[RMDB]
RNA sequence: GGGAACGACUCGAGUAGAGUCGAAAACGAUAAUGACAAUUUCGUCUUUAUACUCAACUGCAUAAGUAUUUUUACCGAUUUCACCUAGACCUCCAAGUGCAUAUACACCUACUUCAUUUGGAUGUAAAGAACCUGAUAAUUUCGAUUAUCAGGUUCUAAAAGAAACAACAACAACAAC
Reactivity to DMS in 0.01 (KOAc 150mM, MgCl2 10mM, bicine 150mM(pH8.5), 24C), signal-to-noise 4, nucleotides 027 to 126: c130g010a050u010a030a060u000g000a100c090a120a200u000u010u020c080g000u000c040u000u000u000a050u000a070c050u010c060a090a100c160u000g030c110a060u000a070a080g020u000a000u000u000u010u000u000a090c030c030g000a140u000u000u010c070a080c030c020u000a070g000a100c050c020u000c020c020a020a030g010u000g000c190a050u000a070u010a050c120a090c090c100u010a080c150u000u010c050a050u000u000u000g000g010a020u010g010u000a060a100
Reactivity to 2A3 in 0.01 (KOAc 150mM, MgCl2 10mM, bicine 150mM(pH8.5), 24C), signal-to-noise 3, nucleotides 027 to 126: c010g000a010u090a050a090u080g060a020c060a110a100u060u140u100c060g010u000c000u010u070u040a080u030a030c020u020c040a070a090c030u090g020c050a080u040a200a060g030u050a150u030u120u070u030u070a090c010c010g060a040u000u040u100c030a090c000c020u050a060g100a110c020c000u000c020c000a020a000g010u010g000c050a020u070a010u010a140c060a040c050c030u060a050c030u050u010c020a050u020u040u020g040g000a040u020g040u080a130a170
Structure probing data (DMS and 2A3) for a 177-nucleotide construct. The DMS profile rests on 2,774 reads. The reactions ran in a buffer of 150 mM KOAc, 10 mM MgCl2 and 150 mM bicine (pH 8.5), at 24 C. It was measured as part of the RMDB library OK2TST. The 2A3 profile rests on 2,575 reads. DMS adducts were read by reverse transcription with MarathonRT.